[RMDB]
RNA sequence: GGGAACGACUCGAGUAGAGUCGAAAAACGACAUUUCCGUCCGUAACACUUGAAGCCUGUGGCCUCACAUCUUGUGGCAGGGAGCCGUCGCGUGUGGGAUCGGCGAAUCGGACACAGUCUUCCGGAGAAUUUAUUAUUUAUUCGUAAAUAAUAAAUUAAAAGAAACAACAACAACAAC
Reactivity to 2A3 in 0.01 (KOAc 150mM, MgCl2 10mM, bicine 150mM(pH8.5), 24C), signal-to-noise 8, nucleotides 027 to 126: a000c060g060a030c050a060u080u090u020c020c020g030u030c030c010g100u110a140a050c070a040c140u060u100g040a030a010g010c010c000u110g040u080g080g020c000c020u060c000a030c000a080u130c070u190u230g030u060g040g020c030a050g080g080g030a050g030c020c020g050u050c020g010c040g050u060g020u090g050g080g020a070u080c030g030g000c020g040a030a030u130c010g010g010a000c010a000c000a040g010u010c000u020u010c030c040g030g020a070g100
Reactivity to DMS in 0.01 (KOAc 150mM, MgCl2 10mM, bicine 150mM(pH8.5), 24C), signal-to-noise 6, nucleotides 027 to 126: a070c090g010a100c110a090u010u010u020c030c030g000u000c030c060g020u010a090a080c140a110c110u010u010g010a050a060g010c050c020u010g020u010g000g000c030c010u010c030a050c070a110u020c120u030u040g030u000g020g020c090a140g020g020g000a170g010c040c030g010u000c020g000c170g020u020g020u010g010g010g000a080u030c040g010g000c020g010a080a080u020c070g010g010a080c050a030c030a040g000u000c010u000u000c010c050g010g010a160g000
Record summary
The record gives the reactivity of an RNA of 177 nucleotides to 2A3 and DMS. The DMS profile rests on 12,945 reads. Conditions: 150 mM KOAc, 10 mM MgCl2 and 150 mM bicine (pH 8.5), 24 C. For DMS the reverse transcriptase was MarathonRT. For 2A3 the reverse transcriptase was SuperScript II with manganese. Values cover nucleotides 27 to 126. 2A3 is a SHAPE reagent: it acylates the 2'-hydroxyl of flexible nucleotides of all four kinds.